RNA sequence: GGGAACGACUCGAGUAGAGUCGAAAAUGUUUUGAUUCAUGUCUGUCUUCUCAAUGUCACUUGUCUACAGUCUCACUAGACUGUGGGCUCCAGGAGGGCAGAGACUAGGUCUGUUUAGUGGUCACAUUCAUUCCAUGAUUCCUGGCAAAUGGUGAAAAGUAGGAGCAUAGUUCGCUAUGCUCCUACUAAAAGAAACAACAACAACAAC
Reactivity to DMS in 0.01 (KOAc 150mM, MgCl2 10mM, bicine 150mM(pH8.5), 24C), signal-to-noise 2, nucleotides 027 to 156: u000g000u020u000u000u010g020a140u000u000c070a090u010g000u000c010u000g020u010c020u000u000c030u010c030a090a130u000g020u010c030a110c060u000u000g020u000c010u000a040c000a010g000u000c020u020c290a160c250u020a190g020a030c030u010g000u010g000g010g020c000u000c120c030a110g010g010a080g020g030g000c020a080g020a060g000a120c090u000a090g020g010u010c040u010g000u000u010u000a120g030u000g020g000u000c050a080c090a080u000u000c050a150u000u000c000c040a100u000g000a220u000u010c010c020u000g010g030c080a030a050a130u000g020g040u000g000a060a070a120
Reactivity to 2A3 in 0.01 (KOAc 150mM, MgCl2 10mM, bicine 150mM(pH8.5), 24C), signal-to-noise 3, nucleotides 027 to 156: u150g040u030u080u080u120g070a060u080u060c050a020u090g090u000c050u000g020u000c020u080u000c040u050c030a040a110u140g060u120c030a040c130u050u060g050u000c000u000a010c000a010g010u010c000u020c030a200c170u250a010g000a010c000u000g020u000g000g000g010c000u000c010c010a030g000g010a010g010g020g040c010a010g010a000g000a030c060u060a020g070g050u010c000u020g060u070u100u180a090g000u040g050g000u060c020a030c020a100u090u100c000a030u150u040c030c020a020u040g030a060u130u000c000c000u020g020g000c050a050a070a050u140g030g020u050g030a070a070a010